[RMDB]
RNA sequence: GGGAACGACUCGAGUAGAGUCGAAAAGUGCACAGCGAACACCCAAGGAUGCUAACAUGGCUCCCCCUGGUCUCCUGAAUCUGUGCUAAAGUAAAUCUGAUUUGUACCUCUGCAUUUGGAGAGCUGCGAUAUCUCGCUUCUUCGGAAGCGAGAUAUCAAAAGAAACAACAACAACAAC
Reactivity to DMS in 0.01 (KOAc 150mM, MgCl2 10mM, bicine 150mM(pH8.5), 24C), signal-to-noise 1, nucleotides 027 to 126: g000u010g030c020a100c010a040g010c170g010a060a080c120a190c080c030c030a190a110g000g010a030u000g000c000u000a060a150c260a090u010g010g010c030u030c080c040c040c000c010u000g010g010u000c150u000c000c010u010g010a060a030u000c010u000g000u010g010c000u010a030a140a060g010u020a080a010a080u020c100u000g000a170u010u010u010g010u000a100c080c030u030c080u030g010c070a160u000u000u000g000g000a060g000a060g030c060u000g030c100

Chemical mapping of a 177-nucleotide RNA with DMS.
For DMS, 658 sequencing reads were counted.
For DMS the reverse transcriptase was MarathonRT.
The RNA was probed in 150 mM KOAc, 10 mM MgCl2 and 150 mM bicine (pH 8.5) at 24 C.